[RMDB]
RNA sequence: GGGAACGACUCGAGUAGAGUCGAAAAACGACGUGUACGCACGUCGAGGGAUAUGAGGAUAAAAAAAUUCAAAUGUGACAUCCAGUCUUACUACAUACGUGGUGAUUGAUCGACUAUCUGAUCCCAACCGUAAGUGCGUGUUCGCACGCACUUACGGAAAAGAAACAACAACAACAAC
Reactivity to 2A3 in 0.01 (KOAc 150mM, MgCl2 10mM, bicine 150mM(pH8.5), 24C), signal-to-noise 3, nucleotides 027 to 126: a000c010g000a040c030g010u020g060u080a010c240g000c110a010c010g000u000c010g000a120g030g020g000a010u050a110u240g110a030g040g060a010u220a050a110a010a010a000a020a010u230u190c120a040a070a170u140g100u110g090a060c040a020u080c040c010a020g030u000c020u060u020a010c020u030a000c000a170u200a140c100g040u030g040g030u060g070a060u080u020g010a010u080c050g060a010c050u030a050u000c020u000g030a060u020c000c000c000a000a040
Reactivity to DMS in 0.01 (KOAc 150mM, MgCl2 10mM, bicine 150mM(pH8.5), 24C), signal-to-noise 1, nucleotides 027 to 126: a100c040g000a010c000g010u000g060u000a150c150g040c000a000c020g070u030c000g000a070g000g000g000a060u000a180u090g000a050g000g000a060u040a000a000a210a060a000a220a060u000u000c060a080a000a100u020g030u000g020a300c090a300u000c090c070a040g000u000c050u000u000a060c000u000a000c000a080u000a020c210g000u000g000g000u000g000a030u000u000g000a000u030c040g000a040c210u030a030u000c040u000g000a120u000c000c030c030a090a090